Structure probing data (2A3) for a 207-nucleotide construct.
2A3 adducts were read by reverse transcription with SuperScript II with manganese.
The data come from the RNA Mapping Database (RMDB), library VIROID.
Conditions: 150 mM KOAc, 10 mM MgCl2 and 150 mM bicine (pH 8.5), 24 C.
The 2A3 profile rests on 1,538 reads.
RNA sequence: GGGAACGACUCGAGUAGAGUCGAAAACCAGCGAGAGGCGUAGGAGAGAGGGCCGCGGUGCUCUGGAGUAGAGGCUUCUAGCUUCGAAACACCAUCGAUCGUCCCUGCUUCUUUUACCUUCUCCUGGCUCUUCGAGUGAGACGCGACCGGUGGCAUCGCCCUCUUGUAACUUCGGUUACAAGAGGGCAAAAGAAACAACAACAACAAC
Reactivity to 2A3 in 0.01 (KOAc 150mM, MgCl2 10mM, bicine 150mM(pH8.5), 24C), signal-to-noise 2, nucleotides 027 to 156: c010c000a010g010c160g030a000g000a000g030g000c190g040u000a010g050g010a010g000a000g000a000g000g000g000c000c000g010c000g000g010u000g000c010u000c000u010g010g000a000g000u000a000g000a000g020g010c030u290u120c160u300a080g000c000u000u000c010g050a020a010a010c010a030c120c000a000u020c000g030a300u040c020g020u010c010c000c000u070g100c010u120u130c000u000u020u010u000a010c010c000u000u020c000u000c000c010u010g010g000c030u030c030u040u030c010g030a030g000u060g010a160g010a040c040g000c020g060a090c020c050g000g050u060g020g020c030a050u100c060